[RMDB]
Annotation: Structure probing data (2A3 and DMS) for a 177-nucleotide construct. For 2A3 the reverse transcriptase was SuperScript II with manganese. Values cover nucleotides 27 to 126. The data come from the RNA Mapping Database (RMDB), library OK1LIB. The reactions ran in a buffer of 150 mM KOAc, 10 mM MgCl2 and 150 mM bicine (pH 8.5), at 24 C.
RNA sequence: GGGAACGACUCGAGUAGAGUCGAAAAGACAAGAAAAGAAAAAGAAAGCUCGCUGAAAGCCAUGACACCGGAAAGACCGGAAAACAGCGAGCAAAGUCAUGGCUUUGAAAAAGAAAAGAAAAGAAAAAGUGAGUAGUAAUUUCGAUUACUACUCACUAAAAGAAACAACAACAACAAC
Reactivity to 2A3 in 0.01 (KOAc 150mM, MgCl2 10mM, bicine 150mM(pH8.5), 24C), signal-to-noise 1, nucleotides 027 to 126: g040a000c040a010a040g070a000a130a050a020g040a100a300a010a060a100g080a070a020a030g010c000u010c020g000c010u010g100a230a100a000g010c050c000a000u010g010a000c000a080c060c040g000g000a100a070a020g080a070c000c000g000g000a020a020a020a020c000a010g060c010g000a000g000c000a000a000a000g000u000c000a020u010g000g000c000u000u000u060g010a040a040a010a010a000g060a000a100a000a000g050a040a120a010a050g100a020a070a000a000
Reactivity to DMS in 0.01 (KOAc 150mM, MgCl2 10mM, bicine 150mM(pH8.5), 24C), signal-to-noise 1, nucleotides 027 to 126: g000a230c010a090a290g010a020a020a100a150g030a020a100a010a120a140g040a160a170a250g000c000u000c010g050c000u000g000a080a010a050g000c000c010a000u010g000a040c010a210c020c000g030g000a200a060a230g000a210c000c000g080g000a040a040a000a170c070a060g000c010g010a050g020c000a020a010a060g050u000c000a020u000g030g000c000u000u000u000g010a120a030a120a020a060g000a070a070a070a090g020a130a040a160a130g000a090a090a080a110